[RMDB]
This 177-nucleotide RNA was probed chemically with DMS. The reactions ran in a buffer of 150 mM KOAc, 10 mM MgCl2 and 150 mM bicine (pH 8.5), at 24 C.
RNA sequence: GGGAACGACUCGAGUAGAGUCGAAAAGAUAUGGACCCAGUGAGGGAGUCGCCAGUCGGAAACGACUGGGCGACGAAGAACUCACGGGUCCUAAGUCAAAAGGAGUUCUUGUUCGCAAGAACUCCAACUUAGGUGAGUUGUUCGCAACUCACCUAAGAAAAGAAACAACAACAACAAC
Reactivity to DMS in 0.01 (KOAc 150mM, MgCl2 10mM, bicine 150mM(pH8.5), 24C), signal-to-noise 1, nucleotides 027 to 126: g020a040u000a040u000g000g010a010c000c000c000a150g040u000g010a000g030g000g020a030g040u010c020g030c000c000a020g000u010c030g000g010a020a020a060c000g000a030c020u010g000g010g020c000g020a010c000g020a090a150g000a160a300c010u000c000a010c020g000g010g000u000c000c000u010a000a030g000u010c000a060a140a130a220g000g000a050g010u000u000c010u000u020g010u010u030c220g000c000a000a000g010a020a010c000u000c000c020a010a030